[RMDB]
RNA sequence: GGGAACGACUCGAGUAGAGUCGAAAAGCUUAACAUACAGGUAGAGUACUCAACAUCUUGCAAUCAUAUAGAAACUUACACCAUGGGAGGAGAUUGUGGUUGUAGACUGAGGAUUGUUCAUCCAUCUGUGUCGGAUACAAAUUACUAUGGUGCAAGCAGUCACUUAGAUCUUCGGAUCUAAGUGACUAAAAGAAACAACAACAACAAC
Reactivity to 2A3 in 0.01 (KOAc 150mM, MgCl2 10mM, bicine 150mM(pH8.5), 24C), signal-to-noise 5, nucleotides 027 to 156: g010c030u070u090a110a020c010a050u210a030c030a060g000g030u060a050g030a030g050u070a060c020u030c060a060a030c000a110u050c020u060u050g020c030a040a100u040c050a030u100a020u030a120g150a080a100a010c010u020u010a010c020a030c020c030a050u040g030g030g010a060g050g030a040g020a060u090u090g040u050g060g040u030u070g050u060a030g030a070c020u040g040a050g020g040a060u030u100g070u120u120c020a030u020c050c010a050u010c070u060g130u030g040u100c050g000g010a020u040a110c030a000a100a000u130u040a050c040u040a030u050g010g000u010g020c000a020a010g030c030
Reactivity to DMS in 0.01 (KOAc 150mM, MgCl2 10mM, bicine 150mM(pH8.5), 24C), signal-to-noise 2, nucleotides 027 to 156: g020c060u000u000a070a080c100a070u010a080c040a080g010g020u010a040g000a060g040u000a130c010u000c040a060a150c060a120u000c020u000u010g030c010a070a050u020c030a080u000a120u000a040g000a120a080a070c030u000u000a080c010a050c000c050a050u010g000g000g000a100g040g000a130g000a120u000u010g030u000g010g010u000u000g000u010a100g000a080c050u010g010a100g010g010a090u000u000g020u010u000c110a130u000c000c040a060u020c060u000g050u000g030u010c040g020g010a100u020a080c050a040a090a120u010u000a030c050u000a040u000g030g020u000g000c030a030a030g020c090